[RMDB]
RNA sequence: GGGAACGACUCGAGUAGAGUCGAAAAGGGUCCGAGUGUCCACAACUGCACCCCAGGCCCAUUGUGCCUGCCGCUGGAGAGUGUGGGGCCCCUUGGCCCCUAAAGGUUUGCUGAGAAGUCACUGACAAAUCACAUGGAACUUCGGUUCCAUGUGAUUAAAAGAAACAACAACAACAAC
Reactivity to DMS in 0.01 (KOAc 150mM, MgCl2 10mM, bicine 150mM(pH8.5), 24C), signal-to-noise 2, nucleotides 027 to 126: g000g000g030u000c030c030g010a080g020u010g000u010c020c020a050c050a050a080c040u000g000c050a070c050c040c080c030a020g000g010c000c010c190a200u020u010g020u010g000c010c000u000g000c050c040g020c190u000g020g010a060g000a160g020u000g030u010g050g030g020g030c050c090c150c060u000u000g020g030c030c000c000c040u000a010a050a090g010g010u010u000u000g020c050u000g000a060g000a080a120g010u000c060a070c070u000g000a090c150a090